This 207-nucleotide RNA was probed chemically with 2A3 and DMS.
2A3 adducts were read by reverse transcription with SuperScript II with manganese.

RNA sequence: GGGAACGACUCGAGUAGAGUCGAAAAUCGUGUGUGUGUGAACGAGUGUGAGAGUGAGAACGUUCGAGUACGUACUCACGUUCGUACACGUUCGUGUGUUCGUUCGUGAACUCGUUCGAUCACGAGAGUGUUCGAUCGUACACUCUCACGAGUGAACUCUAAUCUAAACCUUCGGGUUUAGAUUAGAAAAAGAAACAACAACAACAAC
Reactivity to 2A3 in 0.01 (KOAc 150mM, MgCl2 10mM, bicine 150mM(pH8.5), 24C), signal-to-noise 6, nucleotides 027 to 156: u140c060g000u060g000u010g010u000g000u010g020u020g120a120a040c070g020a100g070u240g000u010g040a010g000a010g000u010g010a130g040a100a010c000g000u010u010c010g010a020g020u020a000c040g010u050a070c040u010c020a000c000g010u000u000c010g010u050a020c030a010c030g070u250u170c110g010u090g000u000g000u170u020c010g000u010u000c010g000u020g060a180a170c020u000c000g010u110u100c110g040a090u120c030a000c020g010a010g000a000g010u020g010u000u020c000g010a010u020c020g000u030a040c010a000c000u000c000u000c000a000c000g010a020g000u090g040a030a020c020
Reactivity to DMS in 0.01 (KOAc 150mM, MgCl2 10mM, bicine 150mM(pH8.5), 24C), signal-to-noise 3, nucleotides 027 to 156: u010c040g030u010g020u000g060u000g000u020g000u010g000a080a070c030g010a120g030u000g020u000g010a070g010a050g000u010g000a060g000a100a040c000g000u000u010c030g020a200g010u000a020c020g040u010a090c060u020c040a020c030g020u000u000c000g020u010a040c020a040c010g020u000u010c110g000u010g000u000g030u000u000c010g020u010u000c040g040u000g010a050a230c020u000c000g000u010u000c030g030a090u010c150a020c020g020a090g000a130g020u000g010u000u000c020g010a060u000c050g010u000a160c000a020c050u000c030u000c010a000c020g000a080g010u000g000a080a130c160